[RMDB]
RNA sequence: GGGAACGACUCGAGUAGAGUCGAAAACGUGAGGUUCGCCUCACGAAAAAAUCCUAAGUCAAGGCAUAUCUCUAGCGUGCGCGAGGAUCGAUCGGAAACGAUCGGGAGCGUCGGGUAUGCACUUGAUAUGGAAAAAACGCCGUGUUCGCACGGCGAACGUUGUAAUGCAGUUCGCUGCAUUACAACGAAAAGAAACAACAACAACAAC
Reactivity to 2A3 in 0.01 (KOAc 150mM, MgCl2 10mM, bicine 150mM(pH8.5), 24C), signal-to-noise 4, nucleotides 027 to 156: c000g000u010g000a000g000g070u050u150c210g150c020c000u000c000a010c000g010a010a000a000a000a000a010u070c040c000u080a150a030g030u010c000a000a000g000g010c000a010u010a020u020c070u030c080u240a130g110c090g250u300g020c010g030c000g010a300g030g000a010u000c000g010a000u000c000g020g040a050a050a100c010g000a000u000c000g000g000g000a010g000c010g010u020c030g010g000g010u010a010u000g010c040a150c040u000u000g000a000u000a030u070g010g050a030a080a060a070a010a000c020g000c000c000g000u010g030u060u090c260g000c100a000c000g000g000c000g000a020a010
Reactivity to DMS in 0.01 (KOAc 150mM, MgCl2 10mM, bicine 150mM(pH8.5), 24C), signal-to-noise 1, nucleotides 027 to 156: c010g000u000g010a030g030g000u010u010c230g050c060c010u000c000a000c000g020a030a030a040a120a050a020u010c020c000u010a080a120g070u000c000a040a030g000g000c020a020u000a020u010c010u000c070u010a120g050c150g070u000g020c010g000c030g060a130g030g000a100u000c000g000a040u000c010g000g000a230a100a300c000g000a020u000c000g010g000g020a140g030c010g010u010c050g000g000g030u030a020u000g000c000a090c000u000u120g000a020u000a250u010g050g000a000a030a130a070a040a080c020g030c030c000g020u000g000u000u000c300g030c040a030c020g010g000c020g020a000a050